Chemical mapping of a 177-nucleotide RNA with DMS.

RNA sequence: GGGAACGACUCGAGUAGAGUCGAAAAGAUAUGGAAGCGUUGUCCGGUUCCUGGGACAUGCAGGAUAAGGGUCGGAAACGACCCGUAACUGCAACAGCCCAGGAACCGGACACCGCUUCCUAAGUCACAAUGCUUUUAACUUCGGUUAAAAGCAUUGAAAAGAAACAACAACAACAAC
Reactivity to DMS in 0.01 (KOAc 150mM, MgCl2 10mM, bicine 150mM(pH8.5), 24C), signal-to-noise 1, nucleotides 027 to 126: g030a070u000a300u030g010g000a010a000g030c000g030u000u000g010u010c010c010g000g010u000u000c020c000u000g000g000g020a080c110a200u010g020c010a010g000g020a050u000a150a280g000g010g020u000c000g020g000a100a170a300c000g000a010c010c010c000g000u010a040a270c010u030g000c000a000a050c270a150g030c020c010c010a000g000g020a000a000c000c010g000g010a000c000a000c010c000g010c000u010u000c000c000u000a010a070g010u010c070a260

For DMS the reverse transcriptase was MarathonRT. It was measured as part of the RMDB library TTRINS.